[RMDB]
RNA sequence: GGGAACGACUCGAGUAGAGUCGAAAAUGGCUUCAGGUGAGACUCAUCACAUUCCCAGCUGUAGUGGCUAAGAGGGAAGACUUUCUAUGCUUGAGAAAAGUGAGGGAAAAGUAAAGGGAACCUUGUCGGAUGCAAUCUUUUUCGAAAGAUUGCAUCCAAAAGAAACAACAACAACAAC
Reactivity to DMS in 0.01 (KOAc 150mM, MgCl2 10mM, bicine 150mM(pH8.5), 24C), signal-to-noise 3, nucleotides 027 to 126: u000g020g020c040u000u000c070a080g020g020u000g010a070g010a090c120u010c070a070u010c050a050c110a190u010u000c000c010c020a120g010c050u000g010u000a140g020u000g010g010c050u010a100a090g010a110g000g010g010a080a060g010a090c060u000u000u000c020u010a110u000g010c050u010u000g000a160g000a070a060a080a070g020u010g000a080g000g000g010a050a050a060a080g020u020a040a070a050g000g000g000a100a100c140c030u000u000g000u010c180
The record gives the reactivity of an RNA of 177 nucleotides to DMS. The DMS profile rests on 2,869 reads. The reactions ran in a buffer of 150 mM KOAc, 10 mM MgCl2 and 150 mM bicine (pH 8.5), at 24 C.